RNA sequence: GGGAACGACUCGAGUAGAGUCGAAAAUGCCAGUGGCUUCACUUCUGACAGCAAACGUCAGUUUGCAAGUGUUGGUGCUGAAUUUAACGCAUGGAAAUGGGCGCAAUUGCGUGCCGGUUAUCGUCAGAAGUAUACGCGUGUUCGCACGCGUAUACUUAAAAGAAACAACAACAACAAC
Reactivity to DMS in 0.01 (KOAc 150mM, MgCl2 10mM, bicine 150mM(pH8.5), 24C), signal-to-noise 2, nucleotides 027 to 126: u010g010c070c010a100g010u000g020g050c050u000u000c060a030c020u000u010c050u000g010a050c100a290g000c040a020a020a060c030g000u000c280a060g020u000u000u000g020c010a070a100g010u000g010u000u010g030g010u000g020c010u000g010a070a050u020u000u010a070a070c050g010c090a020u000g030g000a090a110a060u010g010g000g020c040g010c030a220a080u000u000g010c060g020u000g020c020c010g030g010u010u010a040u000c090g000u010c110a100g010
Reactivity to 2A3 in 0.01 (KOAc 150mM, MgCl2 10mM, bicine 150mM(pH8.5), 24C), signal-to-noise 1, nucleotides 027 to 126: u070g010c020c000a030g050u020g030g060c010u000u000c020a000c020u040u000c030u030g090a020c020a090g000c010a080a000a050c030g120u120c100a150g000u030u080u070g060c010a000a050g020u030g020u080u070g030g200u040g000c070u030g000a030a030u000u130u130a090a010c020g000c060a030u060g010g090a020a080a090u090g010g020g020c030g000c080a160a250u120u250g020c050g000u050g300c030c020g040g000u110u040a060u060c040g060u060c040a030g000

The record gives the reactivity of an RNA of 177 nucleotides to DMS and 2A3. It was measured as part of the RMDB library OK2TST. 2A3 adducts were read by reverse transcription with SuperScript II with manganese. The RNA was probed in 150 mM KOAc, 10 mM MgCl2 and 150 mM bicine (pH 8.5) at 24 C.